The data come from the RNA Mapping Database (RMDB), library OK2TST.
Structure probing data (2A3 and DMS) for a 177-nucleotide construct.
DMS (dimethyl sulfate) methylates the pairing face of unpaired adenines and cytosines.
DMS adducts were read by reverse transcription with MarathonRT.
For DMS, 551 sequencing reads were counted.

RNA sequence: GGGAACGACUCGAGUAGAGUCGAAAACAAAAAUCAGAAAUAUAGAUCGAAUGCUAUGGCGCACGUAAAGCGGUAUCGGAGGUCGUCUAAGUCCUCGGAGGAAGGCGACCUGGACAACGAGGACUAAGUCCAGUCAUCGAUUCGUCGAUGACUGGACAAAAGAAACAACAACAACAAC
Reactivity to 2A3 in 0.01 (KOAc 150mM, MgCl2 10mM, bicine 150mM(pH8.5), 24C), signal-to-noise 1, nucleotides 027 to 126: c030a050a120a000a020a050u210c070a050g160a120a140a000u280a040u040a070g070a100u070c030g070a080a140u120g000c030u050a050u090g010g020c000g000c050a010c030g140u100a080a130a030g020c030g060g000u030a030u050c020g080g030a010g090g000u010c000g000u000c010u040a060a040g080u000c000c000u000c020g070g040a090g000g030a010a020g030g040c000g010a020c000c000u000g030g010a020c030a140a000c070g000a000g020g030a020c030u060a100a020
Reactivity to DMS in 0.01 (KOAc 150mM, MgCl2 10mM, bicine 150mM(pH8.5), 24C), signal-to-noise 1, nucleotides 027 to 126: c020a010a040a090a190a070u010c050a090g000a040a060a010u000a100u000a010g040a040u000c000g000a130a030u000g000c000u000a010u000g000g030c000g080c040a010c150g000u000a000a050a190g010c040g000g000u000a100u000c020g000g100a050g060g000u000c000g030u000c000u000a040a300g010u000c000c000u030c120g010g000a170g000g000a270a030g000g000c060g000a040c070c000u000g090g000a040c170a060a100c070g050a040g000g000a030c060u000a000a160